An RNA of 207 nucleotides, treated with 2A3 and DMS and read out base by base. The reactions ran in a buffer of 150 mM KOAc, 10 mM MgCl2 and 150 mM bicine (pH 8.5), at 24 C. It was measured as part of the RMDB library OK3TST. For DMS, 2,185 sequencing reads were counted. Values cover nucleotides 27 to 156.
RNA sequence: GGGAACGACUCGAGUAGAGUCGAAAAAUGACCAAUCCUGACACGCGUUUGAUCGAAUGUCUAUGGGACGUAUCGUAUGAACUGAAAACAUCUGCAGCUUGGACCAGCGGACUUUAUGUUAUCAAGUUAACUGAUUGCAGAAGCGGCAAACAGUCGCAAGAAGAUAGUGCUUCGGCACUAUCUUCUUAAAAGAAACAACAACAACAAC
Reactivity to 2A3 in 0.01 (KOAc 150mM, MgCl2 10mM, bicine 150mM(pH8.5), 24C), signal-to-noise 2, nucleotides 027 to 156: a010u080g070a050c010c050a060a070u010c030c010u030g020a030c010a010c040g100c010g010u000u000u150g230a220u140c060g010a120a000u030g040u000c020u050a150u190g070g110g000a020c060g080u070a070u120c020g020u060a100u220g090a020a040c040u010g060a030a030a020a000c020a060u010c020u070g010c000a000g030c080u060u060g050g050a070c030c000a010g010c030g070g010a030c020u070u030u030a110u180g030u000u090a030u160c010a060a000g000u020u030a080a100c020u100g060a100u000u070g000c000a000g010a160a030g000c020g000g000c010a090a210a160c060a130g040u010c060g000c010
Reactivity to DMS in 0.01 (KOAc 150mM, MgCl2 10mM, bicine 150mM(pH8.5), 24C), signal-to-noise 1, nucleotides 027 to 156: a130u000g010a190c020c050a210a080u000c010c040u000g000a140c040a030c050g010c020g000u000u020u000g000a140u000c010g020a070a020u000g010u000c030u010a130u000g020g010g000a060c060g000u000a090u000c030g010u010a170u030g000a070a150c100u000g000a100a060a080a080c070a070u000c040u000g010c030a100g010c060u000u000g020g020a040c110c030a050g020c020g010g020a000c020u000u000u010a060u000g010u000u000a140u000c060a060a020g000u010u010a000a010c000u000g020a080u000u000g000c120a120g000a040a120g010c030g020g010c030a080a050a110c120a070g010u000c020g050c120